Chemical mapping of a 177-nucleotide RNA with DMS. The data come from the RNA Mapping Database (RMDB), library 15KREP. Conditions: 150 mM KOAc, 10 mM MgCl2 and 150 mM bicine (pH 8.5), 24 C.
RNA sequence: GGGAACGACUCGAGUAGAGUCGAAAAUGGGUUCCAGGGAAAGCAAAUCCUUGGCAGUACCAUGUUGGAAGAUGAAUUCACACCUGAGGAUGUUAAUAUGCAGAUUAUGGGUGUGGUUAUGCAGAGUAUCUCCCAUAGAGUUCGCUCUAUGGGAGAUAAAAGAAACAACAACAACAAC
Reactivity to DMS in 0.01 (KOAc 150mM, MgCl2 10mM, bicine 150mM(pH8.5), 24C), signal-to-noise 1, nucleotides 027 to 126: u000g020g010g000u010u000c010c000a050g030g010g010a010a080a170g010c300a160a090a140u000c000c000u000u010g000g000c300a060g030u010a060c020c000a050u010g000u000u010g010g000a120a130g000a150u010g000a050a050u000u000c000a020c040a010c000c000u000g000a100g000g000a110u000g040u000u000a090a070u020a130u000g010c020a020g000a050u010u000a030u010g000g000g020u000g040u000g000g010u010u000a010u000g010c090a060g000a120g020u020